[RMDB]
RNA sequence: GGGAACGACUCGAGUAGAGUCGAAAAGAUAUGGAAAUCCCAGUUCUUUUGACGGUCUUGGUUCGGAAACGAACCAUAGACCGAUAAGAACGGGAUUUCCUAAGUCAAACUACCGCUUCGGCGGUAGCUAGUGUUUGUGGUUCGCCACAAACACUAGAAAAGAAACAACAACAACAAC
Reactivity to 2A3 in 0.01 (KOAc 150mM, MgCl2 10mM, bicine 150mM(pH8.5), 24C), signal-to-noise 2, nucleotides 027 to 126: g010a010u100a040u140g000g010a020a000a000u000c050c010c080a040g000u010u000c010u070u190u130u270g300a210c040g000g000u040c000u000u000g010g020u010u000c010g020g010a060a070a100c010g010a000a000c000c000a000u000a000g000a000c000c000g000a000u020a000a000g010a000a000c000g000g000g020a000u000u000u000c000c000u000a070a000g010u010c010a030a100a120c010u000a000c010c020g000c030u070u080c290g220g000c000g000g000u000a000g000
Reactivity to DMS in 0.01 (KOAc 150mM, MgCl2 10mM, bicine 150mM(pH8.5), 24C), signal-to-noise 3, nucleotides 027 to 126: g010a040u010a300u000g000g000a020a020a020u020c000c000c000a180g030u000u000c000u000u000u010u010g020a280c140g010g000u000c000u000u000g010g020u000u000c000g010g010a120a110a270c010g010a000a000c000c010a000u010a010g010a010c000c010g010a020u000a030a020g000a020a020c000g000g000g000a000u010u000u000c000c000u000a010a070g010u000c020a170a100a300c000u000a010c000c010g000c000u000u010c280g030g010c000g020g000u000a000g000
Structure probing data (2A3 and DMS) for a 177-nucleotide construct. For 2A3, 5,255 sequencing reads were counted. DMS adducts were read by reverse transcription with MarathonRT. DMS (dimethyl sulfate) methylates the pairing face of unpaired adenines and cytosines.